An RNA of 207 nucleotides, treated with 2A3 and DMS and read out base by base. For 2A3, 1,306 sequencing reads were counted. 2A3 adducts were read by reverse transcription with SuperScript II with manganese. The RNA was probed in 150 mM KOAc, 10 mM MgCl2 and 150 mM bicine (pH 8.5) at 24 C.

RNA sequence: GGGAACGACUCGAGUAGAGUCGAAAAAGUGCACUAGGUACGCCUAGUGCACAUUCCAGGACAUACUGCUGAGGAUGUCAAAAAUGCAGUUGGAGUCCUCAACUGGAAAGGCUACGGCCUAUCCAGAAAAAGACUUGGUUGUUCGCAACCAAGUCAAGAUAAAGUUUGUGUUCGCACAAACUUUAUCAAAAGAAACAACAACAACAAC
Reactivity to 2A3 in 0.01 (KOAc 150mM, MgCl2 10mM, bicine 150mM(pH8.5), 24C), signal-to-noise 1, nucleotides 027 to 156: a000g010u000g000c000a000c010u010a000g000g020u050a010c180g100c000c000u000a000g000u000g000c000a000c000a000u000u020c000c000a000g020g010a010c010a040u210a010c010u020g050c030u050g040a000g120g120a260u210g300u300c140a030a050a020a030a050u110g010c000a000g000u020u060g050g060a010g030u000c010c010u010c080a030a140c000u010g000g000a060a000a000g010g020c000u020a020c210g010g000c000c000u020a050u000c000c010a010g010a040a040a000a010a000g000a010c000u000u000g010g000u000u000g030u010u090c160g000c070a000a000c000c000a000a000g010u000c000a000a000
Reactivity to DMS in 0.01 (KOAc 150mM, MgCl2 10mM, bicine 150mM(pH8.5), 24C), signal-to-noise 2, nucleotides 027 to 156: a060g040u000g000c000a000c010u000a000g030g030u010a190c300g070c020c000u000a010g060u000g000c000a010c000a010u010u010c040c030a200g020g010a060c020a140u010a070c030u020g020c090u000g010a070g030g020a060u000g000u000c040a040a090a090a110a110u010g030c070a110g040u000u010g020g000a210g020u000c000c000u020c070a060a180c020u000g000g000a080a150a060g020g010c010u010a070c290g080g020c000c000u000a070u020c010c000a090g000a030a080a060a190a180g000a020c010u000u020g020g010u010u000g050u000u030c240g000c010a000a010c000c010a000a040g000u000c010a010a090